[RMDB]
RNA sequence: GGGAACGACUCGAGUAGAGUCGAAAAUUAGGAUUGGGACAACUCACUCAGUUGUCCGCUCGACUAGCGGGAGCCAUAGCGAGAUGCCACUGCUACCUGUCGUUGUAGCGGUGCUUCUCGUCGACGAUUCUGGCUCCUGCUCUAGCGGACAACUGAACAACUACCUCCCGUUCGCGGGAGGUAGUUGAAAAGAAACAACAACAACAAC
Reactivity to 2A3 in 0.01 (KOAc 150mM, MgCl2 10mM, bicine 150mM(pH8.5), 24C), signal-to-noise 4, nucleotides 027 to 156: u200u150a070g120g080a110u040u070g060g000g040a030c030a070a070c070u060c130a030c020u020c000a020g000u000u000g010u000c010c000g010c000u010c020g170a160c140u180a020g010c010g000g000g000a000g010c010c010a040u060a040g000c000g000a000g010a010u010g130c180c000a010c000u000g000c000u000a000c010c010u280g280u300c170g130u250u160g000u000a000g000c000g000g000u000g000c000u010u000c000u000c000g010u050c020g070a090c090g090a100u300u010c040u090g010g000c000u000c000c000u000g000c000u000c000u000a000g000c000g010g000a000c010a000a000c000u000g000a000a000
Notes: An RNA of 207 nucleotides, treated with 2A3 and read out base by base. For 2A3, 2,448 sequencing reads were counted. For 2A3 the reverse transcriptase was SuperScript II with manganese. Conditions: 150 mM KOAc, 10 mM MgCl2 and 150 mM bicine (pH 8.5), 24 C. Reactivities are given for positions 27 through 156.